RNA sequence: GGGAACGACUCGAGUAGAGUCGAAAAGUGGUUGAUGAGGUUAGUAUGUGCACUAAUUAUGAUCUUUCAAUUAUUAAUGCACGUAUUAAAGCUAAGCACAUUGUCUAUGUAGGAGAUCCAGCACAGUUAAACCGUCGUUUCGACGACGGUAAAAGAAACAACAACAACAAC
Reactivity to 2A3 in 0.01 (KOAc 150mM, MgCl2 10mM, bicine 150mM(pH8.5), 24C), signal-to-noise 4, nucleotides 027 to 129: g080u040g050g020u050u060g030a120u080g040a040g020g020u030u030a000g000u030a000u000g000u010g000c000a000c000u000a000a000u020u060a060u000g080a050u050c050u100u300u100c110a150a030u020u060a000u000u010a060a020u050g000c000a000c030g010u000a030u000u020a020a010a030g060c030u020a020a020g050c010a000c010a070u040u170g040u020c030u100a060u060g020u020a050g000g030a040g010a020u010c010c000a030g010c020a010c000a000g030u070u120a110a060
Reactivity to DMS in 0.01 (KOAc 150mM, MgCl2 10mM, bicine 150mM(pH8.5), 24C), signal-to-noise 4, nucleotides 027 to 129: g020u050g000g000u020u010g010a060u020g030a120g010g040u010u030a040g060u010a010u020g020u020g060c030a000c100u000a000a000u020u000a060u020g010a000u050c200u050u080u020c050a070a140u000u000a000u050u010a010a070u030g020c020a030c010g020u060a020u020u040a000a000a020g020c100u060a080a130g060c040a100c060a080u050u020g000u030c050u000a060u050g020u050a080g030g020a000g030a080u010c040c030a080g000c060a000c000a060g020u080u010a070a090

Conditions: 150 mM KOAc, 10 mM MgCl2 and 150 mM bicine (pH 8.5), 24 C. The record gives the reactivity of an RNA of 170 nucleotides to 2A3 and DMS. The data come from the RNA Mapping Database (RMDB), library 15KLIB.